[RMDB]
RNA sequence: GGGAACGACUCGAGUAGAGUCGAAAAGGCUAGGCUCUCGGAGGUGAAUUUGAGCUUUGCUAUCGUAGUCUUUUGGCUACGGUACAGGAUCACCUCCAACUGUACCGAUAGCAUUUUUAUAGCCGAAGGGUGUCUGCUAGUUCGCUAGCAGGUACCCAAAAGAAACAACAACAACAAC
Reactivity to DMS in 0.01 (KOAc 150mM, MgCl2 10mM, bicine 150mM(pH8.5), 24C), signal-to-noise 9, nucleotides 027 to 126: g010g010c000u010a030g000g010c010u000c040u010c100g010g010a030g000g010u000g010a080a100u020u030u020g010a080g000c030u010u010u020g020c140u000a010u000c030g010u000a010g010u000c000u010u020u020u030g010g010c000u000a000c000g000g010u000a010c010a030g000g000a140u000c010a030c070c020u000c080c040a030a020c040u010g010u040a060c020c010g010a070u010a020g010c020a080u020u030u020u030u040a090u020a060g010c010c010g010a120a140
Reactivity to 2A3 in 0.01 (KOAc 150mM, MgCl2 10mM, bicine 150mM(pH8.5), 24C), signal-to-noise 9, nucleotides 027 to 126: g030g000c010u020a010g040g010c000u000c020u030c090g010g010a010g000g020u030g050a120a170u160u130u190g070a080g040c020u130u080u080g030c040u030a010u040c020g010u010a010g020u010c030u030u220u100u300g020g000c000u000a010c000g000g000u000a010c000a010g030g020a020u050c010a010c000c000u000c010c000a000a010c020u060g040u090a060c020c020g030a050u040a010g000c010a030u020u020u000u060u130a180u060a040g030c020c010g010a100a080